The record gives the reactivity of an RNA of 177 nucleotides to DMS.
The DMS profile rests on 1,030 reads.
The RNA was probed in 150 mM KOAc, 10 mM MgCl2 and 150 mM bicine (pH 8.5) at 24 C.

RNA sequence: GGGAACGACUCGAGUAGAGUCGAAAAGGUUGUACGCAGCCGGCAAUCAAGAGUGUUCACGAAUUACGCCGCGCGGGUUUGAAUAAUCGAUUUGCAGAUGAGUUGGACGACCUAUUAUACAGGAUCGCCUCUGCAAAUCUUUCGAGAUUUGCAGAGGAAAAGAAACAACAACAACAAC
Reactivity to DMS in 0.01 (KOAc 150mM, MgCl2 10mM, bicine 150mM(pH8.5), 24C), signal-to-noise 2, nucleotides 027 to 126: g020g000u000u000g010u000a060c120g040c040a060g020c040c070g010g040c030a100a030u000c060a100a130g000a050g040u000g000u000u000c010a050c280g000a120a110u010u000a110c190g030c030c070g020c120g000c040g030g000g020u000u010u000g010a110a030u000a000a070u010c050g010a060u030u000u010g000c020a030g000a130u000g000a130g010u000u000g020g000a090c010g000a020c000c000u000a070u000u000a130u010a190c160a070g000g000a120u000c110g030